[RMDB]
Description: Chemical mapping of a 177-nucleotide RNA with 2A3 and DMS. DMS adducts were read by reverse transcription with MarathonRT. The RNA was probed in 150 mM KOAc, 10 mM MgCl2 and 150 mM bicine (pH 8.5) at 24 C. The 2A3 profile rests on 2,207 reads.
RNA sequence: GGGAACGACUCGAGUAGAGUCGAAAAGGGUUUGAUUUCGGAGAGGGAGCAUGAGAGAUGGCUACCACAUCUAAGGAAGGCAGCAGGCGCGCAAAUUACCUAUCCCUGACUCAGGGAGGUAGUAAACCGACCAUGGUUUUUUCGAAAACCAUGGUCGAAAAGAAACAACAACAACAAC
Reactivity to 2A3 in 0.01 (KOAc 150mM, MgCl2 10mM, bicine 150mM(pH8.5), 24C), signal-to-noise 3, nucleotides 027 to 126: g050g030g040u020u050u110g150a210u020u050u110c050g010g040a040g020a050g060g040g000a040g030c020a060u100g060a050g010a000g040a080u070g020g010c040u150a120c030c020a060c010a080u070c030u050a030a030g020g010a040a020g060g000c010a000g000c030a000g010g030c010g000c030g000c010a000a000a060u080u030a050c000c020u060a060u080c010c000c020u060g190a290c050u030c230a010g000g000g000a000g010g000u010a000g000u030a020a020a060c040
Reactivity to DMS in 0.01 (KOAc 150mM, MgCl2 10mM, bicine 150mM(pH8.5), 24C), signal-to-noise 3, nucleotides 027 to 126: g000g000g030u010u030u000g000a100u000u020u010c050g000g010a080g010a110g000g010g000a070g000c050a070u010g010a110g000a080g000a090u000g010g010c020u040a100c050c060a100c150a130u010c050u000a080a140g050g000a050a060g000g020c040a030g020c040a060g000g000c040g030c100g020c100a030a090a060u030u010a040c010c000u010a100u010c020c010c020u000g000a200c120u010c030a020g030g000g010a030g010g020u000a000g020u000a020a080a080c200